[RMDB]
RNA sequence: GGGAACGACUCGAGUAGAGUCGAAAAGACCAGGCCACUACUGGAUCGAAUGCCAGAGGUCGCUGCGAGUUUGCCUGCUGAGUUGGAUCAUGGUGAGCUGAAACUGGGCAUUCGUAGAAAAAUUGGCUAGUUUAAUGACGUUCGCGUCAUUAAACUAAAAAGAAACAACAACAACAAC
Reactivity to DMS in 0.01 (KOAc 150mM, MgCl2 10mM, bicine 150mM(pH8.5), 24C), signal-to-noise 3, nucleotides 027 to 126: g000a180c010c010a150g000g010c010c010a050c160u000a110c080u000g000g000a120u000c030g020a040a040u000g030c010c000a070g000a140g020g000u000c050g020c050u010g010c060g010a030g020u000u010u000g000c010c020u000g010c110u010g000a110g030u000u010g010g010a130u000c020a090u000g000g010u010g000a060g010c030u000g010a060a070a070c050u000g000g010g000c000a030u000u000c020g020u010a060g010a060a050a030a090a130u000u000g010g000c050
Reactivity to 2A3 in 0.01 (KOAc 150mM, MgCl2 10mM, bicine 150mM(pH8.5), 24C), signal-to-noise 2, nucleotides 027 to 126: g040a020c000c020a010g050g020c000c010a060c040u220a030c030u060g040g010a070u080c040g070a030a010u120g000c020c010a070g020a070g190g020u090c050g020c080u070g020c030g000a050g010u060u110u060g050c010c010u060g020c070u120g050a090g100u110u120g160g040a060u060c020a010u100g060g040u030g000a020g000c050u040g000a060a040a010c020u030g060g000g010c000a010u030u020c000g020u070a030g050a030a070a010a020a040u090u070g030g000c020